The record gives the reactivity of an RNA of 177 nucleotides to DMS and 2A3. The 2A3 profile rests on 6,360 reads. Reactivities are rounded to 0.1 and cut off at 0 and 3. It was measured as part of the RMDB library OK1LIB.
RNA sequence: GGGAACGACUCGAGUAGAGUCGAAAAUGAAAUUAGAUUGAUGUAUAAACGCAUUAAGUUGCUUAGCAAUAUGUUCAUACUUUAACAAUAUUCUGUCCUCGUUUCACUUUGUCUGUAAUUAUUAUAGCCCUAUAGCUUAAUUCGUUAAGCUAUAGGGAAAAGAAACAACAACAACAAC
Reactivity to DMS in 0.01 (KOAc 150mM, MgCl2 10mM, bicine 150mM(pH8.5), 24C), signal-to-noise 5, nucleotides 027 to 126: u010g010a020a050a090u020u020a110g010a190u010u000g010a010u000g010u000a040u010a040a030a050c100g000c210a090u020u040a090a140g020u010u010g010c020u030u010a120g000c030a020a020u010a110u030g020u010u010c060a010u000a020c020u000u020u030a020a030c040a030a070u010a110u000u010c010u000g010u010c000c010u000c030g000u000u000u000c030a070c140u000u010u010g010u010c060u010g010u000a040a060u010u030a090u030u020a090u030a140g000
Reactivity to 2A3 in 0.01 (KOAc 150mM, MgCl2 10mM, bicine 150mM(pH8.5), 24C), signal-to-noise 9, nucleotides 027 to 126: u150g020a020a010a030u130u060a100g140a210u020u090g010a010u030g050u020a030u070a080a080a030c040g000c050a030u160u070a140a140g210u060u040g010c030u120u120a060g000c020a030a040u050a060u220g030u030u040c020a000u020a080c010u070u080u090a060a000c030a040a040u050a250u130u040c020u050g070u020c000c020u040c060g060u030u070u050c120a130c120u120u140u080g080u040c070u020g080u060a160a090u030u130a060u110u090a110u170a150g020